[RMDB]
RNA sequence: GGGAACGACUCGAGUAGAGUCGAAAAAUGCUCUCAUUCAGGAGUUUGAGAAGACUAAAUAUAAACAUGAGGUGAAUGCUUUGGAAGUUACUGCAACAAGGAUGAUUAACUCCUGGCUAAAGGAAGAUGUUGCAGCAUCUAGGUGCAAACAGUGCAACAAACGAGCCUAAUUCGUUAGGCUCGUUUGAAAAGAAACAACAACAACAAC
Reactivity to 2A3 in 0.01 (KOAc 150mM, MgCl2 10mM, bicine 150mM(pH8.5), 24C), signal-to-noise 3, nucleotides 027 to 156: a000u060g010c020u000c000u010c010a030u130u010c010a030g060g030a040g060u010u030u040g050a060g000a090a040g030a030c040u120a070a090a090u250a130u060a090a120a050c090a120u130g040a030g010g000u040g030a120a030u120g010c050u150u090u060g040g000a000a100g020u080u060a080c040u050g010c000a010a020c000a030a090g070g000a040u040g010a030u120u100a050a010c030u000c000c000u010g020g000c030u120a080a020a020g050g010a030a030g060a030u090g010u030u030g030c030a000g000c010a000u040c000u010a040g040g000u010g020c030a000a030a080c020a030g060u050g070c020a040a020
Reactivity to DMS in 0.01 (KOAc 150mM, MgCl2 10mM, bicine 150mM(pH8.5), 24C), signal-to-noise 2, nucleotides 027 to 156: a080u000g030c040u000c010u000c020a110u020u000c030a080g040g020a180g010u020u000u000g010a060g000a090a070g020a080c030u000a040a050a110u000a110u000a100a060a090c100a060u000g000a130g010g030u000g000a090a080u010g010c020u010u000u010g040g020a070a120g030u000u000a050c040u020g010c020a080a050c030a060a040g010g000a060u000g020a170u000u000a040a090c020u010c020c010u010g000g020c110u010a080a050a130g010g020a070a080g020a130u010g010u000u000g000c000a000g020c000a050u000c020u000a090g020g020u000g010c040a060a080a080c080a050g000u020g000c040a050a160

Source information:
The record gives the reactivity of an RNA of 207 nucleotides to 2A3 and DMS. The 2A3 profile rests on 1,591 reads. For DMS, 4,297 sequencing reads were counted. The RNA was probed in 150 mM KOAc, 10 mM MgCl2 and 150 mM bicine (pH 8.5) at 24 C. Reactivities are given for positions 27 through 156.